Notes
Chemical mapping of a 207-nucleotide RNA with DMS and 2A3. The DMS profile rests on 1,636 reads.

RNA sequence: GGGAACGACUCGAGUAGAGUCGAAAAGAGCACUAGAUGCGAUUGUAGACUGUUACAGCAUCUGCUAUCAGUCUGAGAUAGCUCAGGAUAGCUGGAGCUAUCUGCAACGGUGCAGACUCCAGUGACACCGUGAACAAUCGUUCAUGUCACAGUGCAGAUACCUAUGCGCAUUCGUGCGCAUAGGUAUAAAAGAAACAACAACAACAAC
Reactivity to DMS in 0.01 (KOAc 150mM, MgCl2 10mM, bicine 150mM(pH8.5), 24C), signal-to-noise 1, nucleotides 027 to 156: g030a190g040c000a100c020u000a090g020a130u020g060c030g000a020u000u010g020u020a030g000a080c000u000g020u020u000a090c100a080g000c110a180u010c100u010g050c020u000a060u000c000a130g000u000c040u000g050a120g020a050u010a020g010c000u000c020a060g000g030a240u000a160g000c010u020g050g030a030g030c040u000a080u010c020u000g000c030a200a060c100g000g020u000g020c020a050g010a150c050u000c050c050a180g000u000g020a030c090a020c040c040g070u010g030a170a040c080a060a080u000c200g040u000u010c050a130u020g040u000c020a070c090a070g020u020g000c000a130g040
Reactivity to 2A3 in 0.01 (KOAc 150mM, MgCl2 10mM, bicine 150mM(pH8.5), 24C), signal-to-noise 2, nucleotides 027 to 156: g080a000g020c000a000c020u030a000g000a030u070g010c030g010a000u000u000g030u010a030g000a030c030u030g020u080u200a040c060a030g040c040a220u220c190u250g050c000u030a070u150c000a000g020u000c000u060g030a030g000a030u070a020g010c000u000c010a010g040g040a260u080a180g080c050u070g040g000a000g020c010u020a000u000c000u000g010c040a060a020c140g080g040u110g000c000a020g050a060c010u040c060c030a000g030u000g010a020c020a000c010c000g000u020g030a040a010c000a010a040u040c010g040u070u100c130a100u110g060u080c040a020c020a100g020u020g010c000a000g000